Structure probing data (2A3 and DMS) for a 177-nucleotide construct. Values are in units of 0.01, from 0 to 300, in steps of 10. Conditions: 150 mM KOAc, 10 mM MgCl2 and 150 mM bicine (pH 8.5), 24 C.
RNA sequence: GGGAACGACUCGAGUAGAGUCGAAAAGGAAACAACAGAUGCUGGAGAGGAUGUGGAGAAAUAGAAAUGCUUUUACACUGUUGGUGGGAGUGUAAAUUAGUUCAACCAUUGUGGUAGACAGUGUGGCACUAAGACAGCACUUCGGUGCUGUCUUAGUAAAAGAAACAACAACAACAAC
Reactivity to 2A3 in 0.01 (KOAc 150mM, MgCl2 10mM, bicine 150mM(pH8.5), 24C), signal-to-noise 1, nucleotides 027 to 126: g010g000a000a050a030c030a030a000c000a050g020a120u060g000c030u060g040g040a060g010a030g000g020a010u070g020u070g080g000a040g030a030a110a000u110a020g060a040a060a010u090g020c020u000u000u020u030a010c010a000c010u020g050u070u030g070g040u060g000g010g000a030g010u050g010u040a020a030a040u040u120a040g040u030u080c040a030a030c020c020a040u060u190g060u080g090g050u030a010g030a070c000a050g030u020g010u070g080g000c050
Reactivity to DMS in 0.01 (KOAc 150mM, MgCl2 10mM, bicine 150mM(pH8.5), 24C), signal-to-noise 2, nucleotides 027 to 126: g010g010a090a070a070c070a060a050c060a100g020a070u010g020c060u000g000g010a050g020a060g010g030a050u000g000u010g000g010a080g010a040a080a080u010a060g010a050a060a120u000g020c080u000u000u000u010a040c020a030c020u010g010u000u000g020g020u000g020g000g000a050g020u000g000u010a010a030a060u010u010a100g000u000u000c080a100a120c040c010a100u000u010g000u010g020g030u000a060g010a050c040a040g010u000g020u000g010g020c140
The DMS profile rests on 2,602 reads. The 2A3 profile rests on 1,371 reads.